This 177-nucleotide RNA was probed chemically with DMS and 2A3.
For DMS, 14,888 sequencing reads were counted.
For 2A3 the reverse transcriptase was SuperScript II with manganese.
It was measured as part of the RMDB library TTRDEL.
RNA sequence: GGGAACGACUCGAGUAGAGUCGAAAAGAUAUGGAUUGUCAGAAUGGUACUCCAUCGGAAACGAUGGAGGUACCCAUUCUUGGAUUUAUCCUAAGUCAAAAGGCUCCAAUGUUCGCAUUGGAGCCAACCCAUUUACAUAGUUCGCUAUGUAAAUGGGAAAAGAAACAACAACAACAAC
Reactivity to DMS in 0.01 (KOAc 150mM, MgCl2 10mM, bicine 150mM(pH8.5), 24C), signal-to-noise 8, nucleotides 027 to 126: g000a040u010a300u010g000g000a020u000u000g010u000c000a030g000a010a000u000g000g010u000a060c000u000c000c000a000u000c000g010g000a100a100a210c000g010a010u000g000g010a000g000g010u010a020c240c020c020a000u000u000c000u000u010g030g010a010u010u010u000a010u000c010c000u000a060a180g010u010c040a050a070a150a120g010g010c000u000c000c000a010a010u000g010u000u010c250g020c000a010u000u000g000g000a010g010c000c000a010a010
Reactivity to 2A3 in 0.01 (KOAc 150mM, MgCl2 10mM, bicine 150mM(pH8.5), 24C), signal-to-noise 7, nucleotides 027 to 126: g030a010u090a060u150g000g010a000u020u020g020u030c010a000g000a010a010u010g020g010u020a050c000u010c010c000a010u000c000g030g020a100a050a040c020g000a000u000g000g000a000g000g000u020a010c010c000c000a000u000u010c000u020u140g150g010a020u300u210u120a010u010c000c000u030a160a020g060u040c030a010a030a070a250g010g000c000u000c010c000a010a000u010g020u060u110c300g010c160a000u000u000g000g000a000g000c000c000a000a010